[RMDB]
This 177-nucleotide RNA was probed chemically with 2A3 and DMS. High 2A3 reactivity points to a flexible backbone, as in loops and unpaired stretches. 2A3 adducts were read by reverse transcription with SuperScript II with manganese.
RNA sequence: GGGAACGACUCGAGUAGAGUCGAAAAACGUCCAUACGUGGACGAGGAGUGUCCCGGGGCCACCUCUUUGGUUCUGUACAUAUUUUGUUAUUGUACAUAACCAUGGAGUUGGCUGUGGUGCACUCAAACUUCAGCACUGAUUCGUCAGUGCUGAAGUAAAAGAAACAACAACAACAAC
Reactivity to 2A3 in 0.01 (KOAc 150mM, MgCl2 10mM, bicine 150mM(pH8.5), 24C), signal-to-noise 3, nucleotides 027 to 126: a000c020g000u000c010c000a030u040a070c300g060u040g010g000a010c010g000a090g070g010a000g010u000g010u070c000c000c000g050g000g000g000c000c010a010c000c000u000c000u000u000u000g000g020u000u000c020u020g000u020a010c010a020u100a070u040u240u110u120g290u260u110a150u130u110g000u010a000c000a000u020a000a000c000c000a010u000g010g000a020g000u000u000g000g000c000u010g250u020g010g030u000g000c000a000c000u000c000a020a030
Reactivity to DMS in 0.01 (KOAc 150mM, MgCl2 10mM, bicine 150mM(pH8.5), 24C), signal-to-noise 2, nucleotides 027 to 126: a110c010g010u000c000c000a050u020a050c230g030u020g020g010a010c000g000a100g020g000a030g000u010g020u000c300c000c000g020g000g010g000c000c000a000c060c000u000c000u000u000u020g010g000u010u000c070u000g010u010a000c010a010u010a050u000u010u050u050g010u010u000a030u010u000g000u000a000c020a000u000a000a000c010c000a020u000g000g000a030g000u010u000g000g000c000u000g000u000g000g000u010g000c000a000c010u000c000a040a070